[RMDB]
RNA sequence: GGGAACGACUCGAGUAGAGUCGAAAAGAUAUGGAUUCGUAAGGCGCAUAGGGACUGCACCAGCUGGUUAUUCGGAAACGAAUAACCAGCUGGUGGCCUAUGAACUACGCUGAAGAAUCCUAAGUCAGAUACAUUACUUCUUCGGAAGUAAUGUAUCAAAAGAAACAACAACAACAAC
Reactivity to DMS in 0.01 (KOAc 150mM, MgCl2 10mM, bicine 150mM(pH8.5), 24C), signal-to-noise 4, nucleotides 027 to 126: g000a080u010a300u010g000g010a020u020u000c000g020u020a230a300g000g000c010g000c000a030u010a000g000g000g030a080c230u010g010c010a010c000c000a020g010c000u000g000g000u000u000a000u000u000c000g000g020a120a090a240c030g020a010a010u000a010a000c010c000a010g010c000u000g010g010u000g010g000c000c010u000a010u000g010a100a060c170u030a220c030g000c010u010g000a120a250g010a010a010u010c000c000u000a030a100g010u000c070a130
Reactivity to 2A3 in 0.01 (KOAc 150mM, MgCl2 10mM, bicine 150mM(pH8.5), 24C), signal-to-noise 2, nucleotides 027 to 126: g040a010u090a050u260g020g000a030u020u020c020g040u080a110a050g010g000c000g050c000a010u000a010g130g040g090a300c280u300g040c020a000c010c000a000g070c000u040g080g000u000u020a000u010u000c010g050g010a090a130a050c000g010a000a060u000a030a030c020c010a020g040c010u010g000g020u010g000g010c000c000u020a000u000g000a010a010c090u170a010c050g010c060u070g020a040a020g000a000a000u000c000c000u010a110a000g080u000c020a010